The data come from the RNA Mapping Database (RMDB), library OK1LIB. This 177-nucleotide RNA was probed chemically with 2A3. The RNA was probed in 150 mM KOAc, 10 mM MgCl2 and 150 mM bicine (pH 8.5) at 24 C.
[RMDB]
RNA sequence: GGGAACGACUCGAGUAGAGUCGAAAAUGCAAGGGGCAACCACAACUGAGGCCUCCAAUAUCCUGCGCUCUUGCCACGCCUGCCGCAAAAAUAACCCACAACAUCAGAUGCCUCAAGGACACAUCCGGCACCGUGUGCUUUUCGAAGCACACGGUGCAAAAGAAACAACAACAACAAC
Reactivity to 2A3 in 0.01 (KOAc 150mM, MgCl2 10mM, bicine 150mM(pH8.5), 24C), signal-to-noise 1, nucleotides 027 to 126: u100g040c080a080a010g030g000g000g100c030a050a110c060c030a040c010a240a040c060u110g010a050g040g060c000c000u070c000c000a040a080u040a010u160c000c000u000g060c030g020c030u000c010u060u040g030c000c000a010c000g030c000c000u040g010c040c010g060c020a090a050a000a000a000u090a040a010c030c040c000a030c020a120a000c000a130u100c070a060g010a050u140g070c000c000u120c000a020a000g180g040a000c000a000c040a060u100c040c040g030